[RMDB]
RNA sequence: GGGAACGACUCGAGUAGAGUCGAAAAAGCAGUAGCAAUGCUGGGGUCAUGGAGAUGAUUAACAUCGACUUACUGACGGCAAUGCUGCUUGAGCCACAACUGCCGCAAAUCAGUAGCGCCAGCCUGAGAUGACCACUAUCUUCGGAUAGUGGUCAUCAAAAGAAACAACAACAACAAC
Reactivity to DMS in 0.01 (KOAc 150mM, MgCl2 10mM, bicine 150mM(pH8.5), 24C), signal-to-noise 2, nucleotides 027 to 126: a040g010c040a030g020u010a020g010c100a070a090u000g000c000u010g010g010g000g000u010c160a010u020g020g050a210g010a040u000g020a300u000u010a100a230c040a010u000c010g000a080c030u000u000a020c030u000g000a130c060g000g030c010a050a070u000g010c010u000g000c010u010u010g020a100g060c030c070a110c210a080a050c040u010g000c120c010g010c150a030a110a100u000c100a050g000u010a070g030c040g040c060c040a060g000c020c030u010g000a130
Reactivity to 2A3 in 0.01 (KOAc 150mM, MgCl2 10mM, bicine 150mM(pH8.5), 24C), signal-to-noise 2, nucleotides 027 to 126: a000g000c010a000g000u030a010g060c040a100a150u050g030c000u030g050g000g060g060u040c050a050u100g040g000a040g010a030u020g060a070u220u210a100a090c000a000u010c040g010a030c010u000u020a030c020u020g180a130c030g000g040c000a000a060u030g010c000u000g000c000u000u060g010a000g000c030c020a060c020a060a090c030u020g030c050c020g030c090a050a050a160u160c050a060g090u080a020g090c030g000c060c030a020g000c000c040u110g000a100